Structure probing data (2A3 and DMS) for a 207-nucleotide construct.
[RMDB]
RNA sequence: GGGAACGACUCGAGUAGAGUCGAAAAAGUUUUGGCUGUUAGGUGAGGCUCCUAUGCAAACACAGGCCACUGCCCAAAAAUGUCCAAAGACGCCAAUGGGUAGAACAGGGAUUGUCGGAUUAAGGCUAAAACAGCCCAUGCUUCGGCAUGGGCUGAACCUUACAUUAGCGUUCGCGCUAAUGUAAGGAAAAGAAACAACAACAACAAC
Reactivity to 2A3 in 0.01 (KOAc 150mM, MgCl2 10mM, bicine 150mM(pH8.5), 24C), signal-to-noise 2, nucleotides 027 to 156: a010g030u070u040u040u040g030g000c020u060g040u170u060a070g010g040u030g040a080g030g080c040u120c020c040u110a110u270g030c070a040a120a090c070a030c020a050g020g010c000c000a020c000u030g020c030c000c000a020a030a000a020a000u020g010u010c000c000a180a080a110g000a000c030g010c030c000a020a020u020g000g000g040u050a050g010a040a020c000a030g000g010g070a070u040u040g050u100c050g000g000a000u120u160a070a010g020g020c020u040a010a020a000a060c020a000g000c000c000c000a000u000g010c010u110u040c150g070g000c000a000u030g030g010g000c010u010g000a000a000
Reactivity to DMS in 0.01 (KOAc 150mM, MgCl2 10mM, bicine 150mM(pH8.5), 24C), signal-to-noise 1, nucleotides 027 to 156: a040g020u020u020u010u000g010g020c000u000g010u000u000a110g040g030u000g020a110g010g020c040u000c090c040u000a030u020g040c090a170a100a060c070a100c010a070g030g000c040c020a140c020u000g000c040c000c040a020a020a050a090a110u010g030u000c020c020a100a080a200g000a080c020g010c070c040a040a240u000g000g010g000u000a040g030a070a100c030a020g030g030g010a100u010u000g000u000c000g000g000a050u000u000a070a110g030g050c040u000a040a050a050a160c000a040g050c010c000c000a010u000g030c000u000u000c300g050g000c000a000u000g000g000g000c010u010g000a010a020

Conditions: 150 mM KOAc, 10 mM MgCl2 and 150 mM bicine (pH 8.5), 24 C.
DMS adducts were read by reverse transcription with MarathonRT.